RNA sequence: GGGAACGACUCGAGUAGAGUCGAAAAUGGAUAUUUUAUUAGACUUGCACAGAUCAGAAACAAAAAAUGUGCACACAGGUUCAGGGGACUAUGUGCAGCAUUUCUGUAAGGAAAUAGUGGGUGUGAGGUAUAGAGAGAAAACUUUCCCAUCAUCAAAGAGGUAUUAUGCAUUCGUGCAUAAUACCUCAAAAGAAACAACAACAACAAC
Reactivity to 2A3 in 0.01 (KOAc 150mM, MgCl2 10mM, bicine 150mM(pH8.5), 24C), signal-to-noise 1, nucleotides 027 to 156: u110g020g020a080u080a120u090u170u060u020a120u080u020a100g000a050c030u040u040g000c050a010c000a040g030a090u100c030a040g100a080a180a030c160a090a060a000a010a000a030u000g020u030g000c000a000c000a000c000a030g110g000u130u110c030a030g010g050g000g000a010c020u010a020u020g050u010g020c000a050g020c000a030u000u050u010c000u020g050u060a040a030g080g000a000a030a070u100a030g040u060g030g040g020u000g030u030g000a000g000g000u030a020u050a060g070a010g000a000g040a040a090a000a040c000u030u000u020c020c020c000a000u060c000a000u090c000a000a010a060
Reactivity to DMS in 0.01 (KOAc 150mM, MgCl2 10mM, bicine 150mM(pH8.5), 24C), signal-to-noise 1, nucleotides 027 to 156: u000g020g010a190u000a030u000u020u000u020a090u040u000a190g020a090c060u000u010g030c070a050c000a180g000a120u000c130a050g000a100a160a240c100a030a030a030a080a030a030u000g010u000g040c020a040c090a030c030a010g010g010u000u000c070a110g050g020g000g030a110c020u000a020u000g050u000g000c000a110g010c030a140u000u000u000c000u010g040u010a160a170g000g000a040a040a080u000a150g050u010g010g010g030u000g000u000g010a070g040g000u080a070u000a010g000a100g070a150g000a130a020a070a020c070u000u000u000c000c000c000a110u000c040a240u040c110a080a090a240
Record summary: Structure probing data (2A3 and DMS) for a 207-nucleotide construct. DMS adducts were read by reverse transcription with MarathonRT. For DMS, 1,478 sequencing reads were counted. For 2A3 the reverse transcriptase was SuperScript II with manganese. Conditions: 150 mM KOAc, 10 mM MgCl2 and 150 mM bicine (pH 8.5), 24 C. The data come from the RNA Mapping Database (RMDB), library OK3TST.